[RMDB]
RNA sequence: GGGAACGACUCGAGUAGAGUCGAAAAUAUAAGAGCAUGUCACGUGUUAAUUUGUCACUAAAGCACCUAAUAGAGCCGAAAAUUGUAGAGUAUAUGACAAAAGUGCUUAGAAUUAAGAAGAAUAAAGCCACUCUGUUACUUUCGAGUAACAGAGUGGAAAAGAAACAACAACAACAAC
Reactivity to 2A3 in 0.01 (KOAc 150mM, MgCl2 10mM, bicine 150mM(pH8.5), 24C), signal-to-noise 2, nucleotides 027 to 126: u290a020u040a000a130g160a000g000c060a060u000g070u150c010a080c160g120u100g030u000u000a020a060u100u000u140g130u080c000a000c210u060a070a070a060g070c010a000c000c060u020a080a060u040a170g080a000g070c070c030g070a260a000a050a000u170u090g110u090a060g040a030g150u080a060u050a000u120g010a010c130a040a020a010a020g040u070g000c000u050u020a050g060a090a110u250u180a060a060g040a060a000g010a020a020u180a090a120a000g040
Reactivity to DMS in 0.01 (KOAc 150mM, MgCl2 10mM, bicine 150mM(pH8.5), 24C), signal-to-noise 2, nucleotides 027 to 126: u100a130u070a010a110g000a070g000c000a090u000g010u000c040a040c140g070u040g010u010u000a170a120u020u030u050g010u000c050a070c110u060a070a160a050g030c000a020c000c030u000a040a100u050a030g030a040g000c030c050g000a070a030a060a090u000u030g010u000a030g000a050g000u000a060u020a050u020g010a010c020a020a020a080a130g010u000g000c020u000u000a070g030a130a110u020u010a020a060g030a200a120g000a200a030u040a000a050a060g020